[RMDB]
RNA sequence: GGGAACGACUCGAGUAGAGUCGAAAAUAACGGACUAGGAAACUCGAUCUUAUAAGUGGUAAUCCUAGCGAAUCCACGGCGAGGAAACUAGGACACUAACCAUGUGAUCCCGGACGCUAGAAGAAAACAUUUACGUGUCGUUCGCGACACGUAAAUGAAAAGAAACAACAACAACAAC
Reactivity to 2A3 in 0.01 (KOAc 150mM, MgCl2 10mM, bicine 150mM(pH8.5), 24C), signal-to-noise 2, nucleotides 027 to 126: u110a000a030c050g010g060a010c010u030a040g000g090a010a220a000c010u000c020g080a120u020c130u120u300a190u040a300a120g010u020g000g030u050a100a020u000c010c000u000a020g000c010g020a010a070u050c010c020a030c030g060g060c040g020a000g030g000a060a040a000c010u010a010g000g030a010c000a000c060u080a050a030c020c020a040u100g050u030g060a100u010c000c010c000g050g050a020c020g020c030u020a000g070a070a020g020a000a180a000a010
Reactivity to DMS in 0.01 (KOAc 150mM, MgCl2 10mM, bicine 150mM(pH8.5), 24C), signal-to-noise 2, nucleotides 027 to 126: u020a100a140c110g080g020a100c030u000a020g000g010a050a110a110c020u000c020g020a090u000c130u000u000a090u000a120a100g030u000g020g000u000a140a030u000c030c000u000a050g000c010g010a270a110u010c020c000a060c050g010g020c030g010a040g000g000a140a060a210c020u000a010g010g000a060c030a020c090u010a090a150c120c110a060u000g000u010g000a090u000c010c010c040g030g010a170c060g010c020u000a010g020a150a110g010a060a060a050a140